[RMDB]
RNA sequence: GGGAACGACUCGAGUAGAGUCGAAAAGAUAUGGAGUGAUACCGGGAGAAGUGGGUCGGAAACGACCUAACUUCGAGGAUCGGUCAUCACUCCUAAGUCAAAACCAUCGGCAGUUCGCUGCCGAUGGGUAUUGGCAGAAGUUCGCUUCUGCCAAUACAAAAGAAACAACAACAACAAC
Reactivity to 2A3 in 0.01 (KOAc 150mM, MgCl2 10mM, bicine 150mM(pH8.5), 24C), signal-to-noise 4, nucleotides 027 to 126: g030a010u050a030u120g000g000a000g000u000g000a000u010a020c010c010g030g040g010a300g000a030a000g020u030g000g020g000u000c020g010g010a060a050a020c010g000a000c000c010u030a230a160c010u000u010c010g000a130g000g060a110u080c010g010g010u060c130a020u020c000a010c000u000c000c000u000a010a000g010u010c010a010a020a080a200c010c000a010u000c000g000g000c000a020g030u110u190c250g160c210u010g000c000c000g000a000u000g000g000
Reactivity to DMS in 0.01 (KOAc 150mM, MgCl2 10mM, bicine 150mM(pH8.5), 24C), signal-to-noise 5, nucleotides 027 to 126: g000a030u000a300u020g000g010a020g020u000g010a020u000a040c000c000g020g000g000a070g020a010a010g030u000g010g000g010u010c010g010g000a060a060a190c010g010a010c000c000u010a030a020c000u000u000c010g000a120g010g010a070u000c030g000g020u000c220a010u000c010a010c000u000c010c000u000a000a060g010u010c030a100a090a160a300c000c000a010u000c000g000g000c000a020g010u010u010c280g020c010u000g000c000c000g010a000u000g000g000

This 177-nucleotide RNA was probed chemically with 2A3 and DMS. For 2A3, 18,147 sequencing reads were counted. The reactions ran in a buffer of 150 mM KOAc, 10 mM MgCl2 and 150 mM bicine (pH 8.5), at 24 C. It was measured as part of the RMDB library TTRDES.